[RMDB]
RNA sequence: GGGAACGACUCGAGUAGAGUCGAAAAUCGCUAAGCUUCGGCUUAGCGAAAAGUGGCGGCUUGAGGGCGUGUACGGCUGCGCACACACACGACCCUCAAGCCAAAGCAUCGUGUUCGCACGAUGCAAGCUAUUUAUGAUGUUCGCAUCAUAAAUAGCAAAAGAAACAACAACAACAAC
Reactivity to DMS in 0.01 (KOAc 150mM, MgCl2 10mM, bicine 150mM(pH8.5), 24C), signal-to-noise 1, nucleotides 027 to 126: u000c000g010c000u000a000a010g000c000u000u010c220g030g010c000u000u000a010g010c000g000a000a020a050a100g020u020g000g070c300g000g000c000u000u000g000a010g000g000g000c000g000u000g000u000a050c120g010g000c090u000g030c260g000c100a060c040a070c080a070c000a010c000g000a180c000c000c000u000c000a000a000g010c000c000a010a040a050g010c010a000u000c000g010u000g000u000u010c190g020c000a020c000g000a010u000g010c010a050a060
Reactivity to 2A3 in 0.01 (KOAc 150mM, MgCl2 10mM, bicine 150mM(pH8.5), 24C), signal-to-noise 1, nucleotides 027 to 126: u020c000g000c010u010a000a000g000c010u030u160c260g080g000c010u020u010a010g000c000g000a000a000a000a000g130u100g150g230c130g000g000c000u000u000g000a000g000g000g000c000g000u000g000u020a030c070g040g000c080u290g110c130g000c070a030c000a000c000a000c000a000c010g300a300c000c000c000u000c000a000a000g000c000c000a010a000a000g000c000a000u000c000g000u010g010u030u050c230g030c050a000c000g010a000u000g010c000a000a010